The record gives the reactivity of an RNA of 177 nucleotides to DMS and 2A3. The RNA was probed in 150 mM KOAc, 10 mM MgCl2 and 150 mM bicine (pH 8.5) at 24 C. For 2A3 the reverse transcriptase was SuperScript II with manganese.
RNA sequence: GGGAACGACUCGAGUAGAGUCGAAAACACGCAUCCCAAUUGUUCAUUCGACUGUAACAACUGGGUUCGAAUGUAACUUACUAAGCGCGUACUGGUGCUAAACCUACAUGUCUACUCAGCGAAAAACCCCUCACUCAUGAUUCGUCAUGAGUGAGGGAAAAGAAACAACAACAACAAC
Reactivity to DMS in 0.01 (KOAc 150mM, MgCl2 10mM, bicine 150mM(pH8.5), 24C), signal-to-noise 1, nucleotides 027 to 126: c150a120c130g060c140a120u000c000c000c000a000a030u030u000g000u000u070c010a000u000u000c090g040a080c060u000g000u010a270a030c210a130a100c050u000g000g000g000u030u000c050g000a010a000u000g010u010a000a000c000u060u090a050c270u040a040a120g000c000g020c000g010u000a000c130u000g000g020u000g030c180u010a140a120a110c000c050u020a140c230a000u000g020u070c070u050a060c010u000c000a110g030c020g010a010a020a000a010a210c250
Reactivity to 2A3 in 0.01 (KOAc 150mM, MgCl2 10mM, bicine 150mM(pH8.5), 24C), signal-to-noise 5, nucleotides 027 to 126: c120a010c010g040c020a090u040c000c000c010a010a070u090u050g010u010u000c000a010u020u030c010g040a020c020u040g060u200a110a050c040a080a080c090u130g060g090g000u120u060c030g010a010a000u040g010u170a030a000c010u030u110a040c060u090a100a020g030c010g000c010g080u000a040c050u070g050g000u020g050c070u120a050a050a030c010c000u040a070c020a110u090g030u000c000u000a030c010u020c030a030g060c090g080a020a000a020a020a050c010